[RMDB]
RNA sequence: GGGAACGACUCGAGUAGAGUCGAAAAGGGAGUGUGAGCAGAUGAGCAUGUGGGCAUAUGUCUGUCUGUGUGAACUGCCUGGGGAGGCACUGGAAAUGUUCUCUGGCAGGACCUGGCUAUGCUGGGGAAGUAUAUCCACACAAGUGGAUUCUAGGCAGGUACUGAUAAUGUUCGCAUUAUCAGUACCAAAAGAAACAACAACAACAAC
Reactivity to DMS in 0.01 (KOAc 150mM, MgCl2 10mM, bicine 150mM(pH8.5), 24C), signal-to-noise 2, nucleotides 027 to 156: g000g000g020a040g040u000g010u000g000a100g040c020a070g000a060u020g010a180g030c000a060u000g070u000g020g020g000c050a080u000a050u000g000u000c020u000g010u000c020u030g030u000g000u010g010a060a140c040u000g020c020c010u000g030g010g020g010a080g010g010c010a080c050u000g020g000a060a060a050u010g000u010u000c020u000c020u000g010g040c070a060g000g000a080c020c030u000g020g020c040u000a070u000g020c010u010g000g000g030g000a040a070g030u010a110u000a090u000c010c000a010c010a060c200a060a200g010u010g030g010a140u010u000c030u000a090g000g030c060a160
Reactivity to 2A3 in 0.01 (KOAc 150mM, MgCl2 10mM, bicine 150mM(pH8.5), 24C), signal-to-noise 4, nucleotides 027 to 156: g030g000g000a030g020u060g010u050g040a030g010c030a020g030a140u080g030a030g040c040a040u060g040u060g070g030g000c030a030u040a050u170g070u030c030u010g030u000c010u020g100u020g020u050g090a050a040c030u030g010c010c010u030g010g000g010g010a050g030g000c030a020c060u040g040g080a080a070a060u130g030u100u020c020u000c000u000g020g000c000a000g000g030a020c010c020u030g000g020c020u100a060u170g000c010u020g010g020g000g010a020a010g010u060a080u010a000u180c010c000a020c010a020c020a120a170g010u010g000g000a000u030u030c030u050a030g050g010c060a040